[RMDB]
RNA sequence: GGGAACGACUCGAGUAGAGUCGAAAACUCCCCUCAAAAUCGUUUCAGUCCAAAAUUGAUUCGGCGGUCCUGUCAUGAGGCCGAAACGAAGGCACGUACCCCUUCGAAUGGCGUCGGGGAGUCAGCGAAAGCACUGACCCUUUCGAGGGUCAGUGAACGUUUAAUUACUAUUCGUAGUAAUUAAACGAAAAGAAACAACAACAACAAC
Reactivity to 2A3 in 0.01 (KOAc 150mM, MgCl2 10mM, bicine 150mM(pH8.5), 24C), signal-to-noise 2, nucleotides 027 to 156: c020u010c010c010c010c020u100c060a170a200a090a130u080c030g010u020u010u020c040a080g050u020c060c060a100a080a070a090u110u100g040a070u070u050c030g040g010c050g070g000u080c030c020u080g060u080c020a080u080g020a030g040g000c000c000g030a020a000a000c000g010a010a010g030g020c100a010c140g200u210a110c000c000c000c000u030u010c020g060a060a070u130g040g010c040g050u040c040g030g000g000g020a010g040u030c040a010g020c020g090a150a040a010g060c000a000c000u000g000a000c000c010c000u030u030u060c140g080a020g000g000g000u000c000a000g000u000g000a000a010
Reactivity to DMS in 0.01 (KOAc 150mM, MgCl2 10mM, bicine 150mM(pH8.5), 24C), signal-to-noise 3, nucleotides 027 to 156: c030u000c000c010c010c090u010c070a090a070a090a080u000c000g030u010u000u000c020a060g030u000c040c060a080a110a190a220u000u000g000a060u000u000c120g010g000c030g040g010u020c020c020u000g000u000c070a050u010g020a080g000g000c020c010g020a000a030a070c030g020a050a060g000g040c060a090c090g020u000a130c020c040c020c000u030u010c020g010a080a140u010g020g020c030g020u000c060g030g000g020g010a070g020u010c060a130g000c040g010a090a130a180g020c010a010c010u000g010a000c000c000c000u000u000u000c290g010a020g000g000g020u000c000a000g010u000g000a010a070
The record gives the reactivity of an RNA of 207 nucleotides to 2A3 and DMS. The 2A3 profile rests on 3,664 reads. Reactivities are given for positions 27 through 156. The data come from the RNA Mapping Database (RMDB), library M2RFPK.